[RMDB]
RNA sequence: GGGAACGACUCGAGUAGAGUCGAAAAGAUAUGGAUACGCGAGCUCGAUAAGCUGUGGUCGGAAACGACCAUACAGCUUUUGACGAGCUCAUCCUAAGUCAAAGGGAUCGUCUUCGGACGAUCCCAAGAUGACUGCAAGGUUCGCCUUGCAGUCAUCAAAAGAAACAACAACAACAAC
Reactivity to DMS in 0.01 (KOAc 150mM, MgCl2 10mM, bicine 150mM(pH8.5), 24C), signal-to-noise 2, nucleotides 027 to 126: g000a040u000a250u010g000g010a010u010a120c220g070c290g040a010g000c000u010c010g030a120u000a000a010g000c010u010g030u000g000g030u000c010g000g000a030a030a180c000g000a010c020c000a080u010a040c060a000g000c000u010u000u010u000g030a210c090g000a000g010c000u000c000a020u000c000c010u000a070a180g010u000c060a050a070a140g030g000g000a010u000c000g020u000c000u000u000c160g040g000a000c000g010a000u000c000c000c010a000a000
Reactivity to 2A3 in 0.01 (KOAc 150mM, MgCl2 10mM, bicine 150mM(pH8.5), 24C), signal-to-noise 1, nucleotides 027 to 126: g030a000u070a030u160g010g020a010u090a140c270g080c120g300a010g020c000u020c010g090a130u030a180a030g000c000u000g050u040g010g000u020c020g000g030a070a030a050c020g000a010c010c000a020u110a020c000a000g010c000u040u060u010u110g100a060c030g000a000g000c000u000c000a000u010c010c000u010a110a030g090u040c060a000a090a150g010g020g000a020u010c020g030u000c010u020u070c250g100g000a000c000g010a000u050c000c010c000a010a030